[RMDB]
RNA sequence: GGGAACGACUCGAGUAGAGUCGAAAAGCUACACUCUUCGGAGUGUAGCAAACCCGAUGAAGCGGCACUUACGGAGCUUCAUACAACUAAGAGUGCAAAUAAAAAUCGGCGACUUCGGUCGCCGAAACAUCCUGCUUACGUUCGCGUAAGCAGGAUGAAAAGAAACAACAACAACAAC
Reactivity to 2A3 in 0.01 (KOAc 150mM, MgCl2 10mM, bicine 150mM(pH8.5), 24C), signal-to-noise 2, nucleotides 027 to 126: g010c000u000a000c000a000c000u020c000u000u060c200g190g000a000g000u000g010u000a000g010c000a000a000a000c010c000c000g020a030u080g020a000a000g030c040g050g000c060a010c050u080u150a070c200g130g090a050g030c010u000u000c000a010u080a030c120a110a050c050u140a090a040g020a010g050u010g030c020a000a090a090u170a060a110a020a000a040u030c000g030g050c020g010a000c010u000u000c080g100g010u000c020g000c000c010g010a000a000a000
Reactivity to DMS in 0.01 (KOAc 150mM, MgCl2 10mM, bicine 150mM(pH8.5), 24C), signal-to-noise 1, nucleotides 027 to 126: g020c000u000a010c000a010c000u000c000u000u000c140g080g000a000g000u000g000u020a000g010c000a000a020a060c020c020c010g000a140u000g000a070a020g000c020g000g020c000a020c010u010u000a300c120g030g000a300g010c000u000u000c020a050u000a030c130a080a100c100u000a030a080g000a020g050u020g010c050a070a050a040u010a070a140a080a040a140u000c000g010g000c030g020a030c000u000u010c190g020g010u000c000g000c000c000g000a000a000a110